[RMDB]
This 207-nucleotide RNA was probed chemically with DMS and 2A3. For DMS, 5,485 sequencing reads were counted. Conditions: 150 mM KOAc, 10 mM MgCl2 and 150 mM bicine (pH 8.5), 24 C.

RNA sequence: GGGAACGACUCGAGUAGAGUCGAAAAGGCUCACCGGUGAUUAGAAAGGCCACGUUCUGCACCGUCCGUGUCUUGUCGGCGCGGAAGGCGUCCAGCAGGCCGCGGCGGCUGUCGACGUUGGCGAGGAAGACGGCUCGCGCGUCGUCGCGGGCGGGGGCCUUACCUUUCUAUUCGUAGAAAGGUAAGGAAAAGAAACAACAACAACAAC
Reactivity to DMS in 0.01 (KOAc 150mM, MgCl2 10mM, bicine 150mM(pH8.5), 24C), signal-to-noise 2, nucleotides 027 to 156: g000g010c030u010c000a300c040c020g000g030u000g020a140u000u000a070g000a080a060a140g020g000c010c010a040c040g000u010u010c010u010g030c080a000c020c000g000u010c010c020g050u000g010u010c010u000u000g030u000c200g000g020c040g000c020g040g030a080a030g000g000c000g000u000c050c020a080g010c000a070g000g010c030c000g030c020g000g020c020g020g010c030u010g010u010c300g010a020c040g010u000u020g010g020c030g000a050g010g000a120a110g000a060c050g040g060c010u000c040g000c020g010c000g000u010c100g000u010c020g020c020g010g000g050c010g000g000g010g070g000
Reactivity to 2A3 in 0.01 (KOAc 150mM, MgCl2 10mM, bicine 150mM(pH8.5), 24C), signal-to-noise 4, nucleotides 027 to 156: g010g000c030u020c030a040c030c020g010g040u090g040a120u050u170a080g100a120a120a030g110g000c010c000a010c020g060u100u020c020u080g010c030a020c000c010g130u160c030c010g010u010g010u000c030u020u060g050u080c030g010g010c010g010c020g040g130a060a020g230g000c020g030u080c030c020a040g000c010a020g020g010c010c000g000c020g020g030c000g010g000c070u010g030u060c020g010a020c010g030u090u160g040g010c020g000a030g000g040a050a030g030a000c050g060g010c010u000c010g000c000g000c010g160u150c020g040u070c000g010c000g010g000g000c030g010g000g000g000g000

2A3 adducts were read by reverse transcription with SuperScript II with manganese. DMS adducts were read by reverse transcription with MarathonRT.